RNA sequence: GGGAACGACUCGAGUAGAGUCGAAAAGCACGGUGAGGUGGACGUCGGCCGGGACGUGAGGCUGUUCCUCGCGGGCUUCGCCGCCAUGAUGGUCACCGCGACGCUCGCGGCCGUCUACACGGUCCUCCACUGGGGAAGGCUUCGGCCUUCCCCAGUGAAAAGAAACAACAACAACAAC
Reactivity to DMS in 0.01 (KOAc 150mM, MgCl2 10mM, bicine 150mM(pH8.5), 24C), signal-to-noise 2, nucleotides 027 to 126: g010c080a080c080g020g010u000g030a110g020g020u000g000g000a020c110g020u010c080g010g020c060c060g010g000g010a060c030g020u000g010a060g000g030c170u010g020u010u000c030c010u010c030g060c000g000g000g000c000u000u000c060g030c000c200g000c020c010a100u010g020a130u010g010g010u000c100a140c300c160g000c000g010a030c030g010c010u000c020g000c020g000g010c000c030g000u010c120u010a070c150a080c060g020g010u000c010c010u010c040
Reactivity to 2A3 in 0.01 (KOAc 150mM, MgCl2 10mM, bicine 150mM(pH8.5), 24C), signal-to-noise 1, nucleotides 027 to 126: g040c010a000c070g020g040u100g000a090g010g020u030g030g050a010c020g050u080c050g050g000c000c070g020g050g020a010c010g050u050g030a080g060g070c010u020g040u080u120c010c010u030c000g000c000g000g000g000c020u110u070c000g020c010c020g040c010c010a220u300g050a140u190g090g030u090c090a010c150c030g000c000g000a010c010g000c020u000c010g040c000g000g010c000c010g010u070c050u100a120c080a000c020g030g070u030c000c000u020c000
The record gives the reactivity of an RNA of 177 nucleotides to DMS and 2A3. The reactions ran in a buffer of 150 mM KOAc, 10 mM MgCl2 and 150 mM bicine (pH 8.5), at 24 C. For DMS the reverse transcriptase was MarathonRT. It was measured as part of the RMDB library OK2TST. Values cover nucleotides 27 to 126.